[RMDB]
RNA sequence: GGGAACGACUCGAGUAGAGUCGAAAACAAACUGGCACGCCAAACUGGCGCCCUAAAGAAAGAAAGGGGCCAGAAGUCACCACGUUAGGUGGCGGCGAACCUAACGUAAAAGCCAGAAACAACAAAACUAGUGGUAAGACUUCGGUCUUACCACUAGAAAAGAAACAACAACAACAAC
Reactivity to 2A3 in 0.01 (KOAc 150mM, MgCl2 10mM, bicine 150mM(pH8.5), 24C), signal-to-noise 2, nucleotides 027 to 126: c020a000a000a030c000u000g000g000c070a010c160g040c050c010a020a210a050c010u000g010g010c010g300c000c000c000u170a110a040a010g140a060a200a000g090a010a290a040g040g020g010g010c030c000a000g010a050a000g070u000c010a050c130c000a000c090g010u010u000a020g000g000u000g030g030c020g000g090c020g000a020a020c000c000u020a010a030c020g050u080a000a050a090a000g000c000c000a000g000a020a090a000c180a060a000c000a020a010a010a090
Reactivity to DMS in 0.01 (KOAc 150mM, MgCl2 10mM, bicine 150mM(pH8.5), 24C), signal-to-noise 2, nucleotides 027 to 126: c040a030a090a180c000u000g000g000c000a270c300g030c010c130a020a130a120c000u060g000g010c000g000c000c020c000u010a060a090a130g000a070a160a140g020a030a060a010g000g000g000g000c020c010a000g000a080a140g010u040c080a100c200c120a060c020g000u000u000a000g010g000u000g020g040c090g000g000c020g000a140a030c010c010u000a030a020c000g000u000a030a040a190a070g000c000c000a000g010a020a120a030c100a030a110c280a070a080a070a260
Chemical mapping of a 177-nucleotide RNA with 2A3 and DMS. The DMS profile rests on 2,323 reads. For 2A3 the reverse transcriptase was SuperScript II with manganese. The data come from the RNA Mapping Database (RMDB), library OK1LIB. Values cover nucleotides 27 to 126. DMS adducts were read by reverse transcription with MarathonRT. The RNA was probed in 150 mM KOAc, 10 mM MgCl2 and 150 mM bicine (pH 8.5) at 24 C.